An RNA of 207 nucleotides, treated with 2A3 and DMS and read out base by base. Conditions: 150 mM KOAc, 10 mM MgCl2 and 150 mM bicine (pH 8.5), 24 C. DMS adducts were read by reverse transcription with MarathonRT. The 2A3 profile rests on 2,116 reads. It was measured as part of the RMDB library RNAMAK.
RNA sequence: GGGAACGACUCGAGUAGAGUCGAAAACGUUGGUUUCGACCAACGGAUCCGGGGUCUGAUGACCGAUUGUCAGCUAUGAAGUACCUGAAGCCUCCACGGGUAUGGAGCUGGCAAUCGCAAGGACGGAGGCACCCAGUUACCAGUCUUCGGACUGGAAGUUAGCAGUGAAGUUCGCUUCACUGCUAACAAAAGAAACAACAACAACAAC
Reactivity to 2A3 in 0.01 (KOAc 150mM, MgCl2 10mM, bicine 150mM(pH8.5), 24C), signal-to-noise 3, nucleotides 027 to 156: c010g010u010u010g020g030u070u110u190c300g130a040c000c000a000a000c000g010g010a020u000c030c060g010g000g090g010u000c020u020g070a160u030g000a180c010c000g000a000u000u000g000u020c000a000g000c010u020a200u300g000a000a020g000u000a000c020c000u000g050a200a040g010c000c010u010c000c000a000c010g000g000g010u010a000u020g000g010a010g000c000u000g000g030c000a000a000u010c000g000c020a230a300g000g000a000c000g000g000a010g000g020c000a030c010c000c000a020g030u130u150a110c010c000a000g000u000c000u040u220c270g100g000a000c000u010g000g010a000a020
Reactivity to DMS in 0.01 (KOAc 150mM, MgCl2 10mM, bicine 150mM(pH8.5), 24C), signal-to-noise 1, nucleotides 027 to 156: c000g000u000u000g020g020u000u020u050c300g000a110c030c020a020a050c000g010g050a000u050c010c100g000g020g010g010u000c010u030g030a090u000g000a090c300c010g010a010u000u010g010u000c000a040g000c000u000a200u000g000a090a300g030u000a000c000c000u030g000a010a090g000c030c020u000c010c020a300c110g000g010g030u010a010u000g030g000a020g060c010u040g000g030c000a020a020u000c010g000c000a040a060g020g000a030c020g000g010a120g030g030c020a130c030c000c000a300g000u000u000a120c000c000a020g000u000c030u030u000c300g040g020a030c020u000g000g000a010a050